[RMDB]
RNA sequence: GGGAACGACUCGAGUAGAGUCGAAAAUGAGAUAGCUAAAUCACCUCGGUAUGAUUAGGGUGAGACCUAGGAACCGUAGGGGUAUUCUCAAAGGAAGCUUUUCCAGUGACGCCCAUGUAAGUGGGAUAAGAACCAACCCACUUCGGUGGGUUGGUAAGCAUAUAAGAGACUUCGGUCUCUUAUAUGCAAAAGAAACAACAACAACAAC
Reactivity to 2A3 in 0.01 (KOAc 150mM, MgCl2 10mM, bicine 150mM(pH8.5), 24C), signal-to-noise 3, nucleotides 027 to 156: u080g000a010g010a040u080a070g050c090u150a050a100a150u120c070a100c020c010u010c010g000g010u230a160u230g060a120u100u030a030g000g030g000u060g130a070g070a070c000c000u000a010g020g030a040a030c020c030g030u130a040g000g000g010g000u030a100u110u040c030u010c030a040a050a010g100g010a060a040g050c030u050u020u100u050c020c000a030g020u020g110a050c080g020c020c010c000a000u040g080u110a110a110g020u010g000g020g000a020u080a080a050g060a020a000c000c000a010a000c000c000c000a000c020u010u030c040g070g010u000g000g000g010u000u000g000g000u000a000a000
Reactivity to DMS in 0.01 (KOAc 150mM, MgCl2 10mM, bicine 150mM(pH8.5), 24C), signal-to-noise 2, nucleotides 027 to 156: u010g010a070g000a060u000a080g030c040u000a030a050a140u000c020a070c010c000u000c010g020g030u000a070u000g010a290u010u000a050g000g000g020u000g030a270g000a240c030c000u000a040g000g040a140a070c020c040g030u010a010g010g030g020g000u000a100u010u010c020u000c020a040a100a100g030g010a100a100g010c090u000u000u020u000c000c000a130g020u000g000a050c030g010c010c000c010a030u000g010u010a100a200g030u000g010g000g000a060u010a050a100g000a150a080c000c010a040a020c000c000c000a030c010u000u010c300g040g030u000g020g000g020u000u000g000g010u000a010a100